[RMDB]
Chemical mapping of a 207-nucleotide RNA with DMS and 2A3. The data come from the RNA Mapping Database (RMDB), library OK3TST. For DMS, 11,502 sequencing reads were counted. The 2A3 profile rests on 7,636 reads. Conditions: 150 mM KOAc, 10 mM MgCl2 and 150 mM bicine (pH 8.5), 24 C.
RNA sequence: GGGAACGACUCGAGUAGAGUCGAAAAAUCACCAAGACGGCGCGCGGUGACCAGUUUGCCAUGGGCUGGGUAUAUGGCGUGGCCGACCUGGUUGAAACCUUCGCUGGGGCAGAACGCAACCACGCGCUGAUUGAGCAGUACAUGGAACGGCACCAUCAUUUACUGAUAGAUUCGUCUAUCAGUAAAUAAAAGAAACAACAACAACAAC
Reactivity to DMS in 0.01 (KOAc 150mM, MgCl2 10mM, bicine 150mM(pH8.5), 24C), signal-to-noise 4, nucleotides 027 to 156: a080u000c020a110c010c010a040a080g020a130c010g010g020c030g020c010g030c030g020g000u000g000a080c030c010a080g010u000u000u010g030c040c200a120u000g020g010g020c010u000g010g000g010u010a120u010a100u000g040g020c020g030u010g020g030c010c020g000a050c010c010u000g040g030u000u020g030a050a110a130c130c090u000u010c090g030c040u000g020g000g000g000c020a090g000a080a070c030g010c010a140a080c020c010a020c010g000c010g020c020u000g000a140u000u010g000a140g020c050a090g010u000a040c050a070u000g010g010a130a130c050g010g010c030a050c030c020a090u000c060
Reactivity to 2A3 in 0.01 (KOAc 150mM, MgCl2 10mM, bicine 150mM(pH8.5), 24C), signal-to-noise 6, nucleotides 027 to 156: a010u060c030a020c020c010a010a020g090a040c020g000g010c010g000c000g000c030g040g000u030g030a100c000c010a020g000u030u050u080g190c040c020a050u060g020g020g000c010u010g010g020g130u120a110u010a060u230g120g000c000g000u030g090g050c030c000g020a040c000c000u010g010g010u030u200g030a120a090a070c030c000u120u090c040g030c060u020g030g000g020g000c020a020g040a180a020c020g000c030a020a050c030c010a030c050g040c010g000c040u030g040a190u080u080g020a020g020c030a010g040u070a090c010a040u040g010g010a080a070c030g050g000c020a020c080c020a060u150c010